[RMDB]
Source: RMDB library 15KLIB, as collected in RNAgym.
The record gives the reactivity of an RNA of 170 nucleotides to DMS and 2A3.
The RNA was probed in 150 mM KOAc, 10 mM MgCl2 and 150 mM bicine (pH 8.5) at 24 C.
RNA sequence: GGGAACGACUCGAGUAGAGUCGAAAACUCGGCAAAAGGCGGCAGUCCUCAGUACUCUUACUCUUUCCUAUAAAGAGGAGACUGCUGGACUCGCCGCCCAAGCCCGAGCAUGGGCCCCAGUUCCGAACAGGGUCGAGGUUCGCCUCGACCAAAAGAAACAACAACAACAAC
Reactivity to DMS in 0.01 (KOAc 150mM, MgCl2 10mM, bicine 150mM(pH8.5), 24C), signal-to-noise 2, nucleotides 027 to 129: c100u010c000g020g040c050a030a120a140a100g030g020c010g000g000c020a010g010u000c000c000u020c030a000g020u040a100c050u000c030u040u060a180c020u040c000u030u060u000c210c120u030a180u220a170a050a000g020a040g040g000a000g020a090c020u000g110c070u000g080g000a060c000u000c120g060c000c000g040c000c000c000a000a000g000c090c020c040g040a030g030c000a030u030g010g010g000c070c030c010c080a120g030u030u040c000c050g030a130a120c090a000g000
Reactivity to 2A3 in 0.01 (KOAc 150mM, MgCl2 10mM, bicine 150mM(pH8.5), 24C), signal-to-noise 4, nucleotides 027 to 129: c010u000c000g000g000c000a000a030a030a060g000g000c020g000g000c000a000g000u000c000c000u000c000a010g010u140a300c010u000c020u080u190a210c000u000c000u010u060u020c010c120u240a170u180a300a020a030g010a010g000g000a000g000a000c000u000g040c020u000g000g020a000c000u010c030g000c000c000g000c000c000c000a000a000g000c000c000c000g000a000g000c040a100u120g010g070g010c000c000c000c000a030g040u080u010c030c040g090a080a040c040a090g060